[RMDB]
Chemical mapping of a 177-nucleotide RNA with DMS.
It was measured as part of the RMDB library OK2TST.
Values are in units of 0.01, from 0 to 300, in steps of 10.
Reactivities are given for positions 27 through 126.

RNA sequence: GGGAACGACUCGAGUAGAGUCGAAAAAAUUGAUCCAGUAGAACCCCAAAAAGUUUGCAGACUGAGCAUCAUGCCCAAGAGCAAAAUUCCAUUAGCCAAUCCAAGUACUAGGUUGAUCUGAACAUUCCAAGCACAUUGCAUUCGUGCAAUGUGCUUGAAAAGAAACAACAACAACAAC
Reactivity to DMS in 0.01 (KOAc 150mM, MgCl2 10mM, bicine 150mM(pH8.5), 24C), signal-to-noise 1, nucleotides 027 to 126: a090a080u010u000g000a040u010c020c010a030g000u000a080g010a120a050c030c010c020c060a040a120a090a090a100g000u000u000u000g020c090a010g000a110c050u010g000a090g010c080a090u010c050a070u000g040c000c010c030a040a060g000a170g000c050a010a060a010a080u000u000c030c010a050u000u000a040g030c030c050a040a040u000c040c050a130a060g030u000a070c060u020a070g010g000u010u000g010a050u010c010u010g020a070a100c130a070u010u000c050